RNA sequence: GGGAACGACUCGAGUAGAGUCGAAAAAGCGAUGAUACGUCAUCGCAACGAUUGCCUGAUCGUAAAACAGGAGACGGCCGUGGCCGCGACCACGUAUAAAAGCGUAACGUGGUCUACGGACCACGAAAAAAGCGCGGAACGUUCGCGUUCCGCGCAAUCGAUUAUAUCGCUUCGGCGAUAUAAUCGAAAAAGAAACAACAACAACAAC
Reactivity to 2A3 in 0.01 (KOAc 150mM, MgCl2 10mM, bicine 150mM(pH8.5), 24C), signal-to-noise 1, nucleotides 027 to 156: a000g020c020g000a030u000g000a010u050a110c180g060u010c010a000u000c000g000c000a020a020c010g020a010u000u060g010c000c000u030g010a010u010c030g110u260a000a010a000a100c000a000g050g020a010g080a080c150g140g000c070c000g010u000g000g000c010c000g000c010g000a010c000c000a000c010g030u030a080u040a110a110a030a030g200c080g050u050a090a000c010g010u000g010g020u000c000u030a030c040g000g040a110c000c000a000c000g030a020a000a000a000a000a000g000c000g000c000g010g010a000a000c010g030u110u110c150g020c010g100u000u000c000c020g000c020g000c000a010a010

This 207-nucleotide RNA was probed chemically with 2A3. 2A3 adducts were read by reverse transcription with SuperScript II with manganese. Reactivities are given for positions 27 through 156. The 2A3 profile rests on 969 reads.